[RMDB]
RNA sequence: GGGAACGACUCGAGUAGAGUCGAAAAUAAUUCACAAUGGCAUUAGAAGUGGUGCGUUAUUUCUGGAUAGUGACGAUUUUGGUAUUAUGUUUUUAUGUGACAUAGGUAUUAACACAGACUUGGCAUAAGGGCUGCAAUAAUUCGUUAUUGCAGCCCUAAAAGAAACAACAACAACAAC
Reactivity to DMS in 0.01 (KOAc 150mM, MgCl2 10mM, bicine 150mM(pH8.5), 24C), signal-to-noise 1, nucleotides 027 to 126: u020a160a050u010u010c040a060c050a070a060u020g010g010c140a070u010u010a050g000a140a100g000u000g020g040u000g040c150g050u000u010a030u000u000u010c040u010g010g020a160u000a030g020u010g010a070c090g000a090u000u000u000u000g010g060u030a020u000u000a020u010g000u000u000u010u010u000a110u020g000u010g010a020c090a040u000a020g000g000u000a000u000u010a030a130c160a110c120a040g020a090c090u000u000g010g000c090a030u000a150
This 177-nucleotide RNA was probed chemically with DMS. The data come from the RNA Mapping Database (RMDB), library OK2TST. The DMS profile rests on 855 reads. For DMS the reverse transcriptase was MarathonRT.